[RMDB]
The record gives the reactivity of an RNA of 177 nucleotides to DMS and 2A3. For 2A3, 2,114 sequencing reads were counted. 2A3 adducts were read by reverse transcription with SuperScript II with manganese. The reactions ran in a buffer of 150 mM KOAc, 10 mM MgCl2 and 150 mM bicine (pH 8.5), at 24 C. The DMS profile rests on 775 reads. Values cover nucleotides 27 to 126. Values are in units of 0.01, from 0 to 300, in steps of 10.
RNA sequence: GGGAACGACUCGAGUAGAGUCGAAAAGAUAUGGACAUAUCUAGUCCCUAUGGCGUUGAAAUCGGAAACGAUGGAGCCAUAGAGGACGACAUAUGUCCUAAGUCAAAGGUGUUGUUCGCAACACCAAGCCUAUGCCUGUGUUCGCACAGGCAUAGGCAAAAGAAACAACAACAACAAC
Reactivity to DMS in 0.01 (KOAc 150mM, MgCl2 10mM, bicine 150mM(pH8.5), 24C), signal-to-noise 1, nucleotides 027 to 126: g000a020u000a300u030g000g000a010c000a000u000a060u000c030u010a300g010u000c000c000c000u000a000u000g030g000c000g000u010u000g090a060a160a030u000c000g010g000a190a050a170c010g020a000u000g000g010a130g000c000c000a000u000a000g010a200g020g030a000c000g000a000c300a000u000a000u070g000u000c000c000u000a010a050g000u000c130a070a090a060g020g020u000g020u000u000g010u000u020c250g040c030a020a010c000a000c000c000a000a090
Reactivity to 2A3 in 0.01 (KOAc 150mM, MgCl2 10mM, bicine 150mM(pH8.5), 24C), signal-to-noise 1, nucleotides 027 to 126: g070a000u060a050u160g010g010a000c000a000u000a020u000c030u060a000g000u000c000c000c000u010a000u020g000g000c020g300u300u080g040a040a030a030u020c000g020g060a110a020a010c000g000a000u020g000g050a010g030c000c000a000u000a000g010a010g000g030a010c000g000a000c000a010u010a000u000g010u000c000c000u000a030a040g050u040c070a110a080a070g050g000u050g010u020u010g040u090u100c300g000c220a010a010c010a010c010c000a010a030